[RMDB]
RNA sequence: GGGAACGACUCGAGUAGAGUCGAAAAAAGGCGAGCGCGGCGUGCUUCGUCACCGCGUAGGGCGCCGAGUGCAGUUCGGUGAGCAGGCCCGCCGCCGAGGCGGUGUUCAGGAAAUGGCCCUCGCCGCGUUUACUGCAGCUUUCGAGCUGCAGUAAACAAAAGAAACAACAACAACAAC
Reactivity to DMS in 0.01 (KOAc 150mM, MgCl2 10mM, bicine 150mM(pH8.5), 24C), signal-to-noise 2, nucleotides 027 to 126: a100a070g030g000c010g000a050g030c070g010c070g030g000c030g020u010g010c050u000u000c160g010u010c040a040c140c030g020c070g030u000a130g000g020g010c040g000c050c020g000a080g020u000g000c070a110g010u010u000c020g000g000u010g020a070g010c060a080g010g020c050c000c030g010c050c000g000c050c040g010a080g020g000c010g000g000u000g010u000u010c090a100g010g010a030a090a110u000g010g000c000c030c030u000c010g000c000c010g000c240
Reactivity to 2A3 in 0.01 (KOAc 150mM, MgCl2 10mM, bicine 150mM(pH8.5), 24C), signal-to-noise 1, nucleotides 027 to 126: a040a000g070g000c040g030a120g000c070g020c030g040g000c120g070u050g030c030u070u090c010g090u050c040a000c090c050g030c010g060u070a060g040g070g010c040g020c040c040g000a040g000u100g040c060a040g000u140u050c000g030g060u070g050a040g000c040a060g010g110c000c010c010g020c000c000g020c010c020g000a060g070g000c020g010g070u020g000u100u210c040a000g000g190a060a190a140u200g020g010c040c030c020u000c000g050c000c000g000c000
Chemical mapping of a 177-nucleotide RNA with DMS and 2A3. Reactivities are given for positions 27 through 126. For DMS, 1,894 sequencing reads were counted. The RNA was probed in 150 mM KOAc, 10 mM MgCl2 and 150 mM bicine (pH 8.5) at 24 C.